[RMDB]
RNA sequence: GGGAACGACUCGAGUAGAGUCGAAAAGUUCCUAUUAACGUCAGCCUCUUUUGUACUCAUAAUGUGGCUUCGGAUGUUUGAUGGGCGUUGCUUCAGUGCGUACGGCUCAUGGUAGAUUAAUUAUUAGAAAAGGACAUCGAUUCGUCGAUGUCCUUUUAAAAGAAACAACAACAACAAC
Reactivity to DMS in 0.01 (KOAc 150mM, MgCl2 10mM, bicine 150mM(pH8.5), 24C), signal-to-noise 2, nucleotides 027 to 126: g040u000u000c000c010u000a050u000u050a040a030c030g000u000c060a080g020c000c000u000c010u000u030u000u010g000u000a200c300u060c090a060u010a040a030u020g000u000g000g010c010u000u010c140g000g010a070u000g000u000u020u050g010a050u000g010g000g020c060g040u040u000g000c020u010u000c210a090g000u010g030c000g010u040a020c060g040g010c020u000c040a010u000g010g020u000a070g020a110u010u050a060a050u010u010a110u000u040a100g010
An RNA of 177 nucleotides, treated with DMS and read out base by base. The reactions ran in a buffer of 150 mM KOAc, 10 mM MgCl2 and 150 mM bicine (pH 8.5), at 24 C. Reactivities are rounded to 0.1 and cut off at 0 and 3. The data come from the RNA Mapping Database (RMDB), libraries RFM100 and RFMREP.